[RMDB]
RNA sequence: GGGAACGACUCGAGUAGAGUCGAAAAGAUAUGGAGUCUUCAGCAGGGAGUCGAUCGUCGGAAACGACGAAUUGACGAAGAACUGCUGAGAGACUCCUAAGUCAAAAGACACGGUUCGCCGUGUCAACUGUUUACUUGUGUUCGCACAAGUAAACAGAAAAGAAACAACAACAACAAC
Reactivity to DMS in 0.01 (KOAc 150mM, MgCl2 10mM, bicine 150mM(pH8.5), 24C), signal-to-noise 3, nucleotides 027 to 126: g010a060u000a300u000g000g000a040g010u000c000u000u000c000a030g010c010a010g020g000g010a120g020u000c000g000a010u000c000g010u000c000g000g000a170a090a240c000g010a010c000g010a050a040u000u000g010a000c010g000a100a190g020a120a260c010u010g010c010u000g020a050g000a040g000a010c000u000c000c000u000a000a070g020u020c050a090a070a120a140g010a010c000a000c010g020g010u010u040c220g020c000c000g040u000g020u000c000a040a130
Reactivity to 2A3 in 0.01 (KOAc 150mM, MgCl2 10mM, bicine 150mM(pH8.5), 24C), signal-to-noise 2, nucleotides 027 to 126: g040a030u090a070u190g000g000a010g010u000c010u040u010c010a000g020c000a020g040g080g050a080g030u010c020g020a020u010c000g020u000c010g020g030a070a080a100c010g010a010c000g010a050a170u030u010g010a000c000g020a110a050g040a050a060c010u000g020c020u020g010a040g010a000g010a010c010u020c000c000u010a000a000g000u000c010a000a000a020a270g020a000c010a000c010g030g100u080u110c300g030c130c000g000u000g000u000c000a000a000